[RMDB]
Notes: The record gives the reactivity of an RNA of 177 nucleotides to 2A3 and DMS. The data come from the RNA Mapping Database (RMDB), library TTRDES. The reactions ran in a buffer of 150 mM KOAc, 10 mM MgCl2 and 150 mM bicine (pH 8.5), at 24 C.
RNA sequence: GGGAACGACUCGAGUAGAGUCGAAAAGAUAUGGACUGGUGUGUUCAUCGAUCGUGCCCUCGGAAACGAGGGUCACGGGAGAACCACCAGUCCUAAGUCAAAAGCAACCUACUUCGGUAGGUUGCAACUUCCCCUAUCGGUUCGCCGAUAGGGGAAGAAAAGAAACAACAACAACAAC
Reactivity to 2A3 in 0.01 (KOAc 150mM, MgCl2 10mM, bicine 150mM(pH8.5), 24C), signal-to-noise 1, nucleotides 027 to 126: g000a010u020a030u030g010g010a030c000u020g080g020u020g010u030g000u040u010c050a300u300c260g070a060u030c000g030u000g030c000c000c000u000c010g020g000a020a020a020c020g010a020g000g010g060u020c020a000c000g030g000g000a300g030a000a010c000c000a000c000c000a000g000u010c000c000u000a010a000g000u000c010a010a000a050a020g000c010a000a000c020c010u010a000c010u070u180c300g140g020u010a000g030g000u020u010g000c010a010a000
Reactivity to DMS in 0.01 (KOAc 150mM, MgCl2 10mM, bicine 150mM(pH8.5), 24C), signal-to-noise 2, nucleotides 027 to 126: g020a010u000a040u010g000g000a020c010u000g000g020u000g020u000g020u000u000c010a300u020c190g010a020u020c010g010u000g000c000c000c000u000c010g050g000a010a040a050c000g010a020g000g010g020u020c010a000c000g020g000g010a060g000a010a010c020c000a010c000c010a000g020u000c000c000u000a000a090g000u000c010a110a110a190a120g000c000a000a010c000c000u010a010c000u000u010c250g080g000u000a000g020g010u000u000g000c000a040a050